[RMDB]
RNA sequence: GGGAACGACUCGAGUAGAGUCGAAAAACCACUGUCCCCAUUCACCUAAAUGCUACUCAGUCUGAUAUGGACGUCGCGCACGGCAAAAGAUGGGAUAUUGAGCUCCCAUCAUACACUUCUAAAUUGUCGGGAACGACCUGGAAGGGACUUGCGUUCCGCAACUACUCCAGUUCGCUGGAGUAGUUGCAAAAGAAACAACAACAACAAC
Reactivity to 2A3 in 0.01 (KOAc 150mM, MgCl2 10mM, bicine 150mM(pH8.5), 24C), signal-to-noise 2, nucleotides 027 to 156: a000c030c050a080c030u080g040u060c000c000c000c000a050u070u070c060a080c050c050u130a080a130a070u070g070c010u070a050c010u000c100a080g080u020c040u090g070a130u090a060u300g060g020a020c010g060u020c010g000c000g000c010a050c050g010g000c020a000a000a010a130g030a000u000g040g000g040a020u090a080u070u190g080a050g080c050u010c010c000c010a000u020c000a000u050a000c040a040c020u160u230c060u090a010a210a160u070u050g000u010c000g010g000g010a000a040c020g050a060c080c080u010g040g000a030a050g030g000g010a010c000u010u110g030c060g060u060u040c000c040